An RNA of 177 nucleotides, treated with 2A3 and DMS and read out base by base. The RNA was probed in 150 mM KOAc, 10 mM MgCl2 and 150 mM bicine (pH 8.5) at 24 C. For DMS, 10,487 sequencing reads were counted. DMS adducts were read by reverse transcription with MarathonRT. The data come from the RNA Mapping Database (RMDB), library OK2TRN. The 2A3 profile rests on 1,912 reads.
RNA sequence: GGGAACGACUCGAGUAGAGUCGAAAAGCCAGGAGCGGAGCAGGGUUGCAGGCCCAGGACUCUGCUCAGAGCUUGGCGCAGCCGUCAAACGGCGACCCUCUCACGGCGGCCUCCGCCCCCGGGCAUGUAAAGAGGUGAAAUUCGUUUCACCUCUUUAAAAAGAAACAACAACAACAAC
Reactivity to 2A3 in 0.01 (KOAc 150mM, MgCl2 10mM, bicine 150mM(pH8.5), 24C), signal-to-noise 1, nucleotides 027 to 126: g010c000c000a040g130g120a040g100c040g030g010a010g000c000a010g050g040g040u040u190g140c050a020g090g040c000c000c000a010g010g020a050c000u000c000u000g020c000u010c000a000g000a000g000c000u020u010g010g020c040g000c040a010g000c000c010g080u130c120a220a160a100c010g000g000c020g010a040c020c010c000u010c020u040c000a090c030g040g020c030g000g040c040c010u040c020c000g000c000c000c000c000c000g000g010g030c040a030u070g070
Reactivity to DMS in 0.01 (KOAc 150mM, MgCl2 10mM, bicine 150mM(pH8.5), 24C), signal-to-noise 6, nucleotides 027 to 126: g000c000c010a070g000g020a030g020c020g010g010a030g010c030a050g010g000g000u000u000g010c100a100g010g000c010c010c020a220g010g000a060c000u000c000u000g000c040u000c040a030g010a070g010c010u000u000g000g000c060g020c150a180g010c010c010g000u000c160a060a100a300c040g010g010c010g010a110c030c010c010u000c100u010c100a080c110g010g010c050g010g000c060c050u000c030c020g010c010c010c050c030c060g000g010g010c060a080u010g010